[RMDB]
Notes: The record gives the reactivity of an RNA of 207 nucleotides to DMS and 2A3. Conditions: 150 mM KOAc, 10 mM MgCl2 and 150 mM bicine (pH 8.5), 24 C. DMS adducts were read by reverse transcription with MarathonRT.

RNA sequence: GGGAACGACUCGAGUAGAGUCGAAAAACUAGACGAGUUCGCUCGUCUAGUAAAAAGAUAUGGAUGACAAAGGGAGCCAUUGUCGGAAACGACUGGCGAAGAACUUUAAAGAGUGUCAUCCUAAGUCAAAAAACACUGAUCUUUCGAGAUCAGUGAACCCUAUAUUCCCUUUCGAGGGAAUAUAGGGAAAAGAAACAACAACAACAAC
Reactivity to DMS in 0.01 (KOAc 150mM, MgCl2 10mM, bicine 150mM(pH8.5), 24C), signal-to-noise 1, nucleotides 027 to 156: a040c040u000a000g000a040c000g010a040g010u000u000c300g050c010u000c000g020u000c010u020a030g030u000a020a030a040a070a040g010a050u010a130u010g000g040a020u000g020a090c010a010a130a050g000g020g000a260g040c000c010a040u000u000g000u000c030g010g010a120a050a110c000g020a020c030u000g000g010c010g010a050a090g000a090a080c040u000u000u000a100a090a150g010a190g010u000g010u000c000a040u000c010c000u000a010a070g000u030c030a000a080a050a040a090a060c030a020c000u000g000a010u000c010u000u000u030c180g000a130g020a000u000c000a000g000u000g000a020a030
Reactivity to 2A3 in 0.01 (KOAc 150mM, MgCl2 10mM, bicine 150mM(pH8.5), 24C), signal-to-noise 3, nucleotides 027 to 156: a010c010u000a000g020a000c000g000a010g000u050u100c140g120c130u000c000g000u010c000u000a000g000u000a000a030a000a000a000g010a010u030a010u070g000g000a010u020g020a000c040a050a140a060g060g060g010a040g030c000c050a080u110u290g020u010c000g010g010a040a050a000c020g000a000c010u010g000g010c020g010a020a030g020a000a000c090u170u240u300a130a160a010g170a090g100u110g000u000c000a000u010c000c000u000a030a010g000u020c050a000a000a090a000a090a000c010a000c050u030g000a000u000c000u000u140u150c240g100a010g010a040u010c010a000g000u000g010a020a020